This 177-nucleotide RNA was probed chemically with DMS. The reactions ran in a buffer of 150 mM KOAc, 10 mM MgCl2 and 150 mM bicine (pH 8.5), at 24 C. DMS adducts were read by reverse transcription with MarathonRT.

[RMDB]
RNA sequence: GGGAACGACUCGAGUAGAGUCGAAAAGAUAUGGACUCUCUCACGGUCAAUGAUGUCGGAAACGAUUGAGACCCAAGGUGAGAGGAGUCCUAAGUCAAAGAUGAGACGGCUUCGGCCGUCUCAUCAACACAAUCGACAUCUUCGGAUGUCGAUUGUGAAAAGAAACAACAACAACAAC
Reactivity to DMS in 0.01 (KOAc 150mM, MgCl2 10mM, bicine 150mM(pH8.5), 24C), signal-to-noise 2, nucleotides 027 to 126: g010a030u010a300u030g020g010a040c000u000c010u000c000u010c000a020c010g030g000u010c010a100a090u000g000a130u020g000u000c000g060g020a150a150a160c000g000a010u000u000g000a230g030a000c010c100c300a060a030g000g000u000g010a020g030a020g000g000a010g000u000c000c010u010a010a070g000u010c040a040a130a160g000a000u000g000a000g000a020c010g010g000c010u000u010c220g010g000c020c000g050u000c000u010c000a000u000c000a090a200